[RMDB]
RNA sequence: GGGAACGACUCGAGUAGAGUCGAAAACCCGUUUUGUUCGCAAAACGGGACUCAUCUUUGCUUGGCAGCUUAGCAGGUGUUGGCUGGACUGCUGGCUUAUCCUUGGAGGCAGUUUCGACUGCCUCAAUGAUAUCGGAUAGUUCGCUAUCCGAUAUCAAAAAGAAACAACAACAACAAC
Reactivity to 2A3 in 0.01 (KOAc 150mM, MgCl2 10mM, bicine 150mM(pH8.5), 24C), signal-to-noise 5, nucleotides 027 to 126: c000c000c000g000u010u000u000u000g020u000u060c210g010c100a010a000a000a010c000g010g000g040a050c020u020c070a170u040c070u090u190u110g020c020u090u170g050g000c000a010g000c010u050u120a020g010c040a060g080g140u150g100u300u230g190g050c020u020g020g020a060c000u010g000c010u010g020g020c000u020u100a110u110c030c020u010u120g210g010a000g000g020c020a010g000u040u050u150c170g060a020c010u000g030c000c000u000c000a000a000
Reactivity to DMS in 0.01 (KOAc 150mM, MgCl2 10mM, bicine 150mM(pH8.5), 24C), signal-to-noise 5, nucleotides 027 to 126: c000c000c000g020u010u000u000u000g000u010u010c210g020c010a010a010a000a010c000g000g000g000a100c090u000c120a100u010c140u000u000u000g010c010u000u000g030g010c050a030g010c010u000u000a020g010c020a090g010g020u010g010u010u010g010g000c000u000g000g000a040c020u000g000c000u000g010g000c010u000u010a050u000c050c050u000u000g020g020a030g000g010c000a010g010u000u000u010c170g000a040c000u000g000c000c000u000c000a010a030